Source information
The record gives the reactivity of an RNA of 207 nucleotides to 2A3. For 2A3 the reverse transcriptase was SuperScript II with manganese. Conditions: 150 mM KOAc, 10 mM MgCl2 and 150 mM bicine (pH 8.5), 24 C.

RNA sequence: GGGAACGACUCGAGUAGAGUCGAAAAGGGAUAAGAGGAGACUCUUAUCCCCACGUCGUUGUUCGCAACGACGAUUAACCGGUGGCCUCCCGCCCAGGCCACCGUUACUCCACUCCACUCCUUCGGGACUGGUUUGGAGGAACAUAACAGGGCUAAAACCUAGUAGCAUGUUCGCAUGCUACUAGGUAAAAGAAACAACAACAACAAC
Reactivity to 2A3 in 0.01 (KOAc 150mM, MgCl2 10mM, bicine 150mM(pH8.5), 24C), signal-to-noise 1, nucleotides 027 to 156: g010g000g000a000u000a000a010g000a010g040g010a040g020a060c000u010c000u000u010a000u010c000c000c000c000a020c000g010u000c010g010u010u020g050u050u080c220g030c130a000a010c000g000a000c010g010a020u100u100a060a060c040c000g020g000u000g000g000c000c050u070c060c090c020g020c000c010c000a000g010g000c000c000a000c000c000g010u000u060a030c000u000c000c000a000c000u000c010c000a010c020u020c000c000u010u080c220g080g000g000a010c000u000g000g000u000u000u010g000g000a000g000g010a000a020c030a000u230a110a010c040a150g010g010g000c010u010a050a050a050